[RMDB]
RNA sequence: GGGAACGACUCGAGUAGAGUCGAAAAGACAGCUGUAUAGCGUCUGUGAAAGGGCAGGGGGAAAACAGACGCGAAAGAAAUCUCAGACGAAACCCCUGUCCGAGUCUGAGAUUACUGCUGGAAGAAAGGGUUAACAUAUGUUCGCAUAUGUUAACCCAAAAGAAACAACAACAACAAC
Reactivity to 2A3 in 0.01 (KOAc 150mM, MgCl2 10mM, bicine 150mM(pH8.5), 24C), signal-to-noise 3, nucleotides 027 to 126: g120a010c010a010g000c010u030g010u060a070u060a100g010c010g010u000c010u020g000u010g210a180a140a090g010g000g010c030a010g000g000g000g000g050a070a190a010a000c010a000g000a000c000g000c010g010a010a040a000g120a000a060a000u010c020u000c000a000g010a010c010g040a060a080a040c010c000c000c000u000g000u010c000c030g000a010g030u010c010u000g000a000g000a000u010u030a010c010u010g020c000u010g010g080a060a020g130a020a070a040
Reactivity to DMS in 0.01 (KOAc 150mM, MgCl2 10mM, bicine 150mM(pH8.5), 24C), signal-to-noise 3, nucleotides 027 to 126: g010a240c020a030g000c010u010g010u020a020u020a160g010c020g000u000c000u010g000u000g030a080a140a110g010g010g000c000a020g000g030g000g000g030a080a090a080a020c000a000g010a010c020g000c000g000a050a090a160g000a070a030a010u000c000u010c000a000g000a020c000g010a200a250a150c000c010c010c010u020g000u000c020c030g020a100g030u000c000u010g000a010g000a000u020u000a020c040u040g010c010u000g000g020a190a130g020a080a050a100

This 177-nucleotide RNA was probed chemically with 2A3 and DMS. For 2A3, 3,780 sequencing reads were counted. Reactivities are given for positions 27 through 126. Source: RMDB library OK1LIB, as collected in RNAgym.